Conditions: 150 mM KOAc, 10 mM MgCl2 and 150 mM bicine (pH 8.5), 24 C.
Chemical mapping of a 177-nucleotide RNA with DMS and 2A3.

RNA sequence: GGGAACGACUCGAGUAGAGUCGAAAAGUUGAUUUGGAGGUUUUCCCAAUAAUCUAAUCCAGUUCAAAGUUAUUGUGAGGAAAUCCAUCUUUCACUGGUUUUCAGCUCCUGCUCUAAAGUAAGGCUCAUUUGAUAGGAUGUUCGCAUCCUAUCAAAUAAAAGAAACAACAACAACAAC
Reactivity to DMS in 0.01 (KOAc 150mM, MgCl2 10mM, bicine 150mM(pH8.5), 24C), signal-to-noise 5, nucleotides 027 to 126: g010u010u000g020a040u010u000u000g010g010a060g000g010u000u000u010u010c010c010c010a070a060u000a060a040u020c070u000a110a180u010c060c090a060g000u000u010c100a060a150a120g020u000u000a030u000u000g020u010g010a120g010g000a030a030a050u000c020c020a070u000c030u010u000u000c070a050c050u000g000g000u000u000u000u000c040a070g010c020u000c070c030u010g000c010u000c040u000a060a080a060g010u000a070a090g000g020c060u000c080
Reactivity to 2A3 in 0.01 (KOAc 150mM, MgCl2 10mM, bicine 150mM(pH8.5), 24C), signal-to-noise 1, nucleotides 027 to 126: g040u060u070g020a060u080u070u050g040g010a080g020g080u020u000u040u070c000c010c040a000a030u070a010a010u040c050u070a010a060u040c040c080a040g010u140u120c070a170a060a100g000u030u040a070u100u070g100u060g040a140g050g000a000a040a080u000c000c010a080u000c010u000u070u030c040a050c040u020g070g060u040u030u050u150c060a000g000c010u030c000c030u030g020c010u000c010u140a180a110a030g070u060a070a070g110g000c000u000c010